RNA sequence: GGGAACGACUCGAGUAGAGUCGAAAAAGUAGGGGAUGGGACAUUGCACUGGCCCCCAUGUCAGGGUUUGCAAAUCAAAUCAGGUACCCUGCAUUAAUCUCAGACAUGGUGACCUGGUUCGCUAAUAGAUUGAAGGAAUAUUCGUAUUCCUUCAAUCAAAAGAAACAACAACAACAAC
Reactivity to DMS in 0.01 (KOAc 150mM, MgCl2 10mM, bicine 150mM(pH8.5), 24C), signal-to-noise 9, nucleotides 027 to 126: a090g010u000a050g010g010g000g010a100u010g000g010g010a090c110a080u000u010g020c060a080c250u000g000g010c020c020c040c030c040a050u000g010u000c040a090g010g000g010u000u000u000g010c070a040a060a100u010c140a060a040a050u010c070a040g010g010u000a100c040c040c030u000g010c020a050u010u010a060a070u010c070u000c080a120g010a070c060a030u000g000g010u000g000a060c020c020u000g010g010u000u000c090g020c110u010a070a090u010a100
Reactivity to 2A3 in 0.01 (KOAc 150mM, MgCl2 10mM, bicine 150mM(pH8.5), 24C), signal-to-noise 5, nucleotides 027 to 126: a000g050u080a020g020g010g000g030a040u070g050g010g020a020c040a100u060u160g020c050a030c100u040g040g010c000c010c000c020c010a030u070g050u050c040a010g060g040g000u070u130u110g010c020a020a040a090u130c020a020a060a070u050c020a030g060g010u040a050c000c000c030u000g000c000a000u030u110a070a100u030c050u010c070a020g010a070c020a040u080g000g040u040g030a030c000c010u040g030g040u060u040c050g000c050u080a080a040u060a240
Overview: Structure probing data (DMS and 2A3) for a 177-nucleotide construct. For 2A3 the reverse transcriptase was SuperScript II with manganese. Source: RMDB library OK2TRN, as collected in RNAgym.